[RMDB]
RNA sequence: GGGAACGACUCGAGUAGAGUCGAAAACAGAUCGAUGCGCUCUCGUGACGGUUCGGUGGAUGGGUCUCGACGCCUGACGCGAGUCGGUGGGAGUGGACACUGUGCAGGCAUGAAGCGGGCCCGGUUACGGGAUUACGUGAUUCGUCACGUAAUCCCGAAAAGAAACAACAACAACAAC
Reactivity to DMS in 0.01 (KOAc 150mM, MgCl2 10mM, bicine 150mM(pH8.5), 24C), signal-to-noise 2, nucleotides 027 to 126: c070a110g020a060u000c060g020a070u000g010c130g020c050u010c040u010c040g000u000g010a150c080g010g020u000u020c020g020g020u010g020g000a120u020g010g000g010u000c020u020c050g020a190c170g010c030c000u000g000a060c030g020c150g000a090g010u000c020g040g020u000g010g000g010a100g050u010g000g020a070c040a070c050u000g010u000g000c030a030g020g010c010a150u010g000a080a080g010c060g010g010g010c000c010c030g010g020u010u010a120
Reactivity to 2A3 in 0.01 (KOAc 150mM, MgCl2 10mM, bicine 150mM(pH8.5), 24C), signal-to-noise 2, nucleotides 027 to 126: c030a020g050a130u110c050g040a040u100g080c080g000c060u030c000u050c050g030u060g020a030c030g020g070u070u080c060g030g090u070g040g070a160u120g010g000g110u020c020u060c090g060a050c080g060c020c020u110g000a060c010g050c030g040a040g030u050c050g040g030u130g030g040g010a080g000u110g000g030a000c010a010c050u050g030u050g020c000a030g000g010c000a020u130g050a070a000g060c050g000g000g000c000c000c000g010g000u060u040a040
Conditions: 150 mM KOAc, 10 mM MgCl2 and 150 mM bicine (pH 8.5), 24 C.
An RNA of 177 nucleotides, treated with DMS and 2A3 and read out base by base.
It was measured as part of the RMDB library OK2TST.
The 2A3 profile rests on 2,354 reads.
For DMS the reverse transcriptase was MarathonRT.